[RMDB]
RNA sequence: GGGAACGACUCGAGUAGAGUCGAAAAGAUAUGGAGAUCUCCUGCGCAGCGAAGAACAGAUUUCGGAAACGAAAUCUGGGAGCUGGGCAGGAGGAUCUCCUAAGUCAAACAGUGGUUCGCCACUGAAGGUAAAAAACAGGUUCGCCUGUUUUUUACCAAAAGAAACAACAACAACAAC
Reactivity to DMS in 0.01 (KOAc 150mM, MgCl2 10mM, bicine 150mM(pH8.5), 24C), signal-to-noise 2, nucleotides 027 to 126: g010a090u010a300u030g010g000a000g030a030u000c000u000c000c000u000g000c000g000c010a020g000c050g020a090a180g000a130a190c010a000g000a010u010u000u000c010g010g010a100a140a300c030g000a020a020a000u000c000u000g000g000g000a050g020c010u000g000g000g030c000a010g000g020a000g000g010a000u000c000u010c000c000u000a010a060g000u010c060a170a080a300c020a010g030u000g010g010u000u030c240g040c000c000a020c000u000g010a100a060
Reactivity to 2A3 in 0.01 (KOAc 150mM, MgCl2 10mM, bicine 150mM(pH8.5), 24C), signal-to-noise 1, nucleotides 027 to 126: g030a000u100a000u220g000g000a000g010a030u000c030u010c010c000u010g000c300g050c000a000g010c000g140a300a050g040a140a000c000a010g020a020u000u000u000c010g030g000a070a070a050c030g040a000a000a000u020c000u010g000g000g020a040g000c000u000g040g260g000c040a000g000g020a010g030g000a000u000c000u000c020c000u020a010a000g020u000c030a050a080a090c000a050g000u010g050g130u110u160c270g070c050c030a010c000u030g120a140a070

Notes:
This 177-nucleotide RNA was probed chemically with DMS and 2A3. For DMS the reverse transcriptase was MarathonRT. It was measured as part of the RMDB library TTRDES. The 2A3 profile rests on 1,363 reads. The RNA was probed in 150 mM KOAc, 10 mM MgCl2 and 150 mM bicine (pH 8.5) at 24 C.